Conditions: 150 mM KOAc, 10 mM MgCl2 and 150 mM bicine (pH 8.5), 24 C. This 177-nucleotide RNA was probed chemically with DMS and 2A3. High 2A3 reactivity points to a flexible backbone, as in loops and unpaired stretches.
[RMDB]
RNA sequence: GGGAACGACUCGAGUAGAGUCGAAAAGGAGGAAGAAAAACAAAGGCAGGAAGUGGCGGCGGCCUGACGGUGCGUGUGUGUCUGCAGAGAAGGGAGGGAGCCGGCUCAGUCUCUUCUUGUUUUUCCAAAGGAAAACAUGAUUCGUCAUGUUUUCCUUAAAAGAAACAACAACAACAAC
Reactivity to DMS in 0.01 (KOAc 150mM, MgCl2 10mM, bicine 150mM(pH8.5), 24C), signal-to-noise 8, nucleotides 027 to 126: g000g000a080g010g010a070a060g010a040a060a060a080a090c150a070a090a080g000g010c030a060g010g010a110a080g010u010g010g010c060g010g010c060g010g000c030c030u010g000a090c090g010g020u010g000c040g020u010g010u020g020u010g010u020c040u010g000c100a060g010a070g010a060a070g000g000g010a050g000g010g000a080g010c060c050g000g000c020u000c040a100g000u010c020u000c010u010u000c050u000u010g000u000u000u000u000u000c040c060a080
Reactivity to 2A3 in 0.01 (KOAc 150mM, MgCl2 10mM, bicine 150mM(pH8.5), 24C), signal-to-noise 5, nucleotides 027 to 126: g050g010a040g030g030a060a040g060a040a130a010a000a010c090a050a050a020g050g020c020a020g020g070a090a020g040u040g060g010c020g020g000c020g010g030c000c020u040g020a030c040g020g040u080g030c050g020u110g000u030g010u010g050u040c030u060g000c040a010g010a000g020a100a030g030g000g010a060g030g000g000a010g030c040c020g030g000c010u020c020a030g050u000c000u010c000u080u000c000u000u030g030u020u020u010u010u010c020c000a040